RNA sequence: GGGAACGACUCGAGUAGAGUCGAAAAUGGGAAUAGUGGUGAAAGGCCAAUCAAGGCCGGCGACAGCUGGUUCCACUCGAAAUGACUCUAAGGUCAGCCUGACUGGAGGUUGGUGGCGGGGUAGAGCGCUACAAUGGGGUUUCGACCCCAUUGUAGCAAAAGAAACAACAACAACAAC
Reactivity to 2A3 in 0.01 (KOAc 150mM, MgCl2 10mM, bicine 150mM(pH8.5), 24C), signal-to-noise 3, nucleotides 027 to 126: u100g040g030g000a030a090u090a140g060u080g050g000u060g040a110a110a030g010g010c000c010a020a010u160c100a170a120g020g000c000c000g020g000c000g040a040c040a080g030c040u040g000g000u080u050c040c000a050c010u040c040g060a020a000a110u060g000a000c000u020c070u210a050a030g090g020u000c000a030g000c010c000u040g040a100c010u020g030g040a030g020g010u100u130g000g010u070g020g000c110g020g000g000g000u040a020g000a000g010c080
Reactivity to DMS in 0.01 (KOAc 150mM, MgCl2 10mM, bicine 150mM(pH8.5), 24C), signal-to-noise 3, nucleotides 027 to 126: u010g000g000g020a090a110u010a100g020u000g000g030u030g020a080a140a110g000g030c000c030a080a080u060c120a140a230g000g000c020c010g000g000c120g010a130c230a100g000c000u010g030g000u000u000c000c020a050c090u010c090g000a050a070a060u000g000a030c010u020c130u050a120a110g010g000u020c010a060g010c100c030u040g020a070c080u020g020g010a060g010g000u020u010g000g010u010g000g010c120g000g000g000g000u010a040g000a080g000c070

This 177-nucleotide RNA was probed chemically with 2A3 and DMS.